[RMDB]
RNA sequence: GGGAACGACUCGAGUAGAGUCGAAAAUGCUGAAACCUGCCCACCCGAAAGCUUCGAGAUUGGCGUGGGGGCCGAUCGAGGAAAAGCUGACAACGGUGGGAACCAUGAUACAGAUUAUGAGAGAUGAGCACUUGUCGAAAUUCGUUUCGACAAGUGCAAAAGAAACAACAACAACAAC
Reactivity to DMS in 0.01 (KOAc 150mM, MgCl2 10mM, bicine 150mM(pH8.5), 24C), signal-to-noise 1, nucleotides 027 to 126: u010g000c040u000g000a220a090a200c120c050u000g070c040c000c000a000c000c000c050g000a010a280a000g000c000u010u000c000g000a070g000a000u000u000g000g000c010g000u060g010g000g050g000g000c000c000g010a000u000c000g000a300g000g000a040a170a020a000g000c020u000g000a050c130a180a300c130g010g000u000g000g090g000a000a010c070c060a070u000g010a190u000a070c000a050g000a000u000u000a060u000g000a300g000a080g000a100u080g000a260
Reactivity to 2A3 in 0.01 (KOAc 150mM, MgCl2 10mM, bicine 150mM(pH8.5), 24C), signal-to-noise 2, nucleotides 027 to 126: u050g000c090u080g030a080a050a000c010c020u050g020c040c000c000a030c000c000c000g050a080a050a000g000c000u020u010c000g070a110g000a020u000u020g000g000c090g050u300g030g130g000g170g000c000c010g000a000u000c000g000a160g090g030a020a180a040a000g000c000u000g000a010c140a130a000c010g010g030u040g020g020g000a000a000c000c010a000u090g000a010u010a100c100a080g060a160u080u110a090u170g020a100g010a010g050a040u220g120a010